The record gives the reactivity of an RNA of 177 nucleotides to DMS.
RNA sequence: GGGAACGACUCGAGUAGAGUCGAAAACUAGACGGGUUCGCCCGUCUAGAAACGGAGCGAAUAGGGGGCUUCGCCUCCGGCCCAGCCCUUCCGCUGACGCCCAAAGCUCAACCUUCGGGUUGAGCAACUAAGUCCGUAACUUCGGUUACGGACUUAGAAAAGAAACAACAACAACAAC
Reactivity to DMS in 0.01 (KOAc 150mM, MgCl2 10mM, bicine 150mM(pH8.5), 24C), signal-to-noise 1, nucleotides 027 to 126: c010u010a030g010a000c030g000g000g020u000u000c220g020c000c000c010g010u000c000u000a010g000a060a100a140c040g020g010a060g050c020g010a080a020u010a240g030g000g000g000g030c300u000u000c110g020c050c010u000c180c130g010g000c020c030c050a070g000c030c010c000u010u000c110c020g000c020u010g000a140c070g020c020c000c010a050a110a150g080c000u010c000a000a000c000c000u000u000c170g040g000g020u000u000g000a010g000c000a000a000

For DMS the reverse transcriptase was MarathonRT.